[RMDB]
RNA sequence: GGGAACGACUCGAGUAGAGUCGAAAAAGAGCCGGAUACGUCCGGCUCAACGGGGGAUACGUGUGGUGCCGUCCGCUCCCCCUAUGGCAUAACAAAUGCGCCACACACUAGGCUACGGCCUAGUGAAAAAAUCCCUACAUGUUCGCAUGUAGGGAAAGCAAAAUGUAUAGUUCGCUAUACAUUUUGCAAAAGAAACAACAACAACAAC
Reactivity to 2A3 in 0.01 (KOAc 150mM, MgCl2 10mM, bicine 150mM(pH8.5), 24C), signal-to-noise 1, nucleotides 027 to 156: a000g000a000g000c000c000g000g000a000u050a050c160g070u040c000c000g040g020c000u000c000a000a000c000g000g000g000g000g000a010u010a060c000g010u040g010u000g030g020u060g020c000c010g010u010c020c030g050c040u040c010c030c000c010c000u020a220u190g070g040c060a110u060a200a040c020a040a070a020u110g000c010g000c030c000a000c000a000c000a000c030u000a000g000g000c010u020a010c210g070g000c000c000u000a000g000u010g000a050a000a000a000a000a000u030c000c010c000u000a000c000a000u010g000u000u060c120g000c090a000u000g020u000a000g000g000g010a040a010a000